[RMDB]
RNA sequence: GGGAACGACUCGAGUAGAGUCGAAAAGGUAGCCAGGGCCUGGAGCCGGAUGCCGAGAAGGAGGCCUGCAACUCAUUUCCCCAUUAGACGUUCUGAGAACACGUGCACCAGCUUCCAAGCUUUCUCCGACCUUAGUCAUCUUCGGAUGACUAAGGUCAAAAGAAACAACAACAACAAC
Reactivity to DMS in 0.01 (KOAc 150mM, MgCl2 10mM, bicine 150mM(pH8.5), 24C), signal-to-noise 2, nucleotides 027 to 126: g000g000u000a030g000c070c000a080g010g000g010c060c030u030g000g000a080g000c020c050g030g000a100u000g010c000c000g000a100g000a110a090g000g020a090g010g000c020c020u000g000c100a090a100c010u000c130a180u080u000u010c000c000c000c070a140u010u020a060g010a060c070g030u000u000c040u000g010a160g000a050a090c060a130c070g000u010g020c030a050c060c060a050g000c070u000u000c020c010a190a110g040c090u010u000u000c010u000c000c300
Reactivity to 2A3 in 0.01 (KOAc 150mM, MgCl2 10mM, bicine 150mM(pH8.5), 24C), signal-to-noise 3, nucleotides 027 to 126: g020g030u030a000g010c030c050a040g010g040g000c000c000u060g080g020a020g000c000c020g020g000a060u060g070c020c000g020a040g090a080a040g080g030a020g020g020c000c000u020g040c010a040a080c000u000c070a070u000u010u040c000c000c000c000a120u130u180a070g050a030c030g030u050u040c070u120g060a040g010a080a010c010a020c160g020u030g010c000a020c040c000a050g000c000u120u030c020c000a060a040g020c050u020u050u030c010u010c000c040